[RMDB]
RNA sequence: GGGAACGACUCGAGUAGAGUCGAAAAUUGCCACCCAUGGCACUGGUGACCUUGAGCAGCUCCUUGGGCGUUUGGGUGGGGAACAGGCACCAGCGCUUGUGGCCGCGGAUCAGCGUGUUCCAGGCACAAUCACUCGUCCUUUCGAGGACGAGUGAUUAAAAGAAACAACAACAACAAC
Reactivity to 2A3 in 0.01 (KOAc 150mM, MgCl2 10mM, bicine 150mM(pH8.5), 24C), signal-to-noise 5, nucleotides 027 to 126: u100u080g020c010c000a030c030c030c000a070u130g030g000c010a020c060u010g020g010u090g100a300c020c000u150u100g050a100g060c060a030g020c020u040c010c020u060u100g050g070g020c060g090u070u160u090g100g000g020u100g000g000g020g020a000a050c030a000g000g010c000a010c000c020a030g010c010g010c000u050u180g060u050g090g000c010c010g010c010g070g080a170u190c070a060g060c030g040u070g030u030u000c010c000a030g010g030c050a020c030
Reactivity to DMS in 0.01 (KOAc 150mM, MgCl2 10mM, bicine 150mM(pH8.5), 24C), signal-to-noise 1, nucleotides 027 to 126: u030u000g000c030c050a200c040c120c090a050u030g000g030c010a070c000u010g000g000u000g000a060c080c000u000u000g000a080g040c160a150g020c030u020c000c070u000u040g020g000g000c010g040u000u010u030g000g000g030u010g000g040g000g000a070a090c060a000g000g020c000a030c000c000a020g000c050g000c020u010u020g010u000g000g000c030c050g000c040g000g000a110u010c100a070g010c030g000u020g050u020u000c010c000a110g040g010c100a150c140
This 177-nucleotide RNA was probed chemically with 2A3 and DMS. It was measured as part of the RMDB library OK1LIB. The reactions ran in a buffer of 150 mM KOAc, 10 mM MgCl2 and 150 mM bicine (pH 8.5), at 24 C. 2A3 adducts were read by reverse transcription with SuperScript II with manganese. DMS adducts were read by reverse transcription with MarathonRT.